[RMDB]
RNA sequence: GGGAACGACUCGAGUAGAGUCGAAAACAAGUUUGGAGUCAUCCGGGCCCUAAGGUAGAAUAGAACCCCGGGGGGUGAUCCACCAGGAGAUGAACGGAAAAAUCACCUCCAGAGGACCCCUUCAGCGCGAGCCAUGUGUUCGCACAUGGCAAAAGAAACAACAACAACAAC
Reactivity to DMS in 0.01 (KOAc 150mM, MgCl2 10mM, bicine 150mM(pH8.5), 24C), signal-to-noise 8, nucleotides 027 to 129: c110a090a080g010u020u020u040g040g010a030g020u030c020a070u000c060c020g000g010g040c080c030c040u000a030a080g020g020u020a000g020a110a110u030a100g030a080a100c000c000c030c040g030g000g010g010g010g040u020g010a070u020c030c040a220c070c110a190g040g020a100g000a060u020g030a070a120c100g000g070a020a080a060a130a060u010c020a020c000c020u030c010c010a060g000a070g020g040a090c040c010c000c030u040u000c040a090g000c080g000c070g020a140
Reactivity to 2A3 in 0.01 (KOAc 150mM, MgCl2 10mM, bicine 150mM(pH8.5), 24C), signal-to-noise 7, nucleotides 027 to 129: c030a020a060g060u060u090u120g030g000a050g010u060c020a050u040c040c000g010g040g020c030c010c000u040a070a020g050g020u060a040g070a120a070u070a050g060a060a060c000c000c010c020g010g010g000g010g000g010u010g020a100u010c010c010a030c020c030a070g030g030a080g020a050u090g030a090a040c070g070g050a110a080a000a030a010u010c010a000c000c000u020c020c010a000g050a060g010g010a020c010c000c000c000u060u070c050a050g010c040g010c030g070a010